Record summary:
Structure probing data (2A3) for a 207-nucleotide construct. Conditions: 150 mM KOAc, 10 mM MgCl2 and 150 mM bicine (pH 8.5), 24 C.
RNA sequence: GGGAACGACUCGAGUAGAGUCGAAAAAGCGUGAUUCGUCACGCUAAAAAACCGUAGGUACUUUGAUCAUGGGAGCUUUGAUCUACCGUUCGAAAGAGCGGUAGGGAGCUCCACAUGGGAGUACCUAAACGGAAAAAGAGUUGAUUCGUCAACUCAAGCAAUAUUAGCGGUUCGCCGCUAAUAUUGCAAAAGAAACAACAACAACAAC
Reactivity to 2A3 in 0.01 (KOAc 150mM, MgCl2 10mM, bicine 150mM(pH8.5), 24C), signal-to-noise 1, nucleotides 027 to 156: a000g030c000g000u000g020a030u060u080c100g040u010c080a010c020g030c000u010a040a000a010a000a000a020c000c000g020u000a010g000g000u000a000c020u070u070u190g080a200u300c000a000u010g000g000g000a000g000c020u300u300u000g070a020u030c000u000a000c010c000g010u020u010c020g050a080a090a050g020a010g000c000g000g000u000a000g000g000g000a000g000c000u000c000c000a000c000a000u010g010g010g000a000g010u000a000c000c000u000a010a050a000c000g000g090a060a240a000a080a000g010a010g000u020u020g030a040u110u140c300g070u020c090a000a010c000u020c020a010a020
2A3 adducts were read by reverse transcription with SuperScript II with manganese.